[RMDB]
An RNA of 177 nucleotides, treated with DMS and 2A3 and read out base by base.
RNA sequence: GGGAACGACUCGAGUAGAGUCGAAAACACUCACGAUUCGUCGUGAGUGAAAGAACGCCAAAGUGACGCUAUCUUCCGCGUCAGGAAGGCGAAACGAGGUAAAAACCGGGUCCUUCGGGACCCGGAACACAUUAGAAGGAUUCGUCCUUCUAAUGUGAAAAGAAACAACAACAACAAC
Reactivity to DMS in 0.01 (KOAc 150mM, MgCl2 10mM, bicine 150mM(pH8.5), 24C), signal-to-noise 9, nucleotides 027 to 126: c010a010c000u000c000a010c010g010a020u000u010c210g020u000c000g020u000g000a010g020u000g000a020a060a070g010a110a170c060g010c000c010a020a100a300g000u000g000a090c000g010c010u000a130u010c150u010u000c170c180g010c060g010u000c040a030g000g010a240a160g000g000c010g000a020a090a050c080g000a140g010g010u010a050a050a060a120a100c010c010g000g000g010u000c000c000u010u000c180g010g010g010a010c000c000c000g000g000a000a040
Reactivity to 2A3 in 0.01 (KOAc 150mM, MgCl2 10mM, bicine 150mM(pH8.5), 24C), signal-to-noise 5, nucleotides 027 to 126: c000a000c000u010c000a010c000g020a020u060u060c190g040u010c000g000u130g010a000g000u000g000a000a000a000g010a100a030c020g000c010c010a070a080a020g100u010g010a000c010g010c010u050a070u270c100u190u060c090c030g010c020g050u010c000a000g010g020a040a030g010g000c020g000a010a010a000c040g040a040g030g120u130a090a090a020a020a040c000c000g010g000g000u000c010c000u050u110c140g060g000g000a000c000c000c000g000g000a000a000
Conditions: 150 mM KOAc, 10 mM MgCl2 and 150 mM bicine (pH 8.5), 24 C.